Chemical mapping of a 177-nucleotide RNA with DMS and 2A3.
For DMS the reverse transcriptase was MarathonRT.

RNA sequence: GGGAACGACUCGAGUAGAGUCGAAAACUUCAUAGAUGUAGAUCUCGGACCUAUGAAUGGGGAUAUUUCCGAAACUCACACAGAAAAAAGGAAGUGAGUUAGACAAAAAUAAAAGCAACUUGGACAAACCACAUCAUCUGUUCGCAGAUGAUGUGGUAAAAGAAACAACAACAACAAC
Reactivity to DMS in 0.01 (KOAc 150mM, MgCl2 10mM, bicine 150mM(pH8.5), 24C), signal-to-noise 2, nucleotides 027 to 126: c040u000u000c000a050u010a070g000a070u020g000u020a060g040a070u020c020u000c020g000g000a050c090c000u020a010u000g000a180a010u020g000g010g040g000a050u040a150u000u000u020c020c000g020a110a010a000c000u000c000a000c030a110c100a160g020a000a010a020a080a130a080g000g040a260a080g050u000g020a040g000u000u010a110g020a300c180a020a060a090a020a190u010a040a030a130a080g020c300a060a060c050u000u020g010g000a110c080a050a090
Reactivity to 2A3 in 0.01 (KOAc 150mM, MgCl2 10mM, bicine 150mM(pH8.5), 24C), signal-to-noise 3, nucleotides 027 to 126: c010u010u000c000a030u020a010g060a170u210g040u070a020g000a300u010c090u090c190g060g060a030c000c010u030a030u120g020a040a030u130g010g010g010g040a100u060a150u150u060u030c000c000g020a070a000a000c000u010c000a000c040a010c040a050g290a170a120a010a000a000a030g110g000a130a060g000u030g000a000g000u010u080a030g020a020c090a000a050a020a050a070u300a160a110a000a000g080c100a030a010c020u130u130g000g000a010c090a010a180

Conditions: 150 mM KOAc, 10 mM MgCl2 and 150 mM bicine (pH 8.5), 24 C.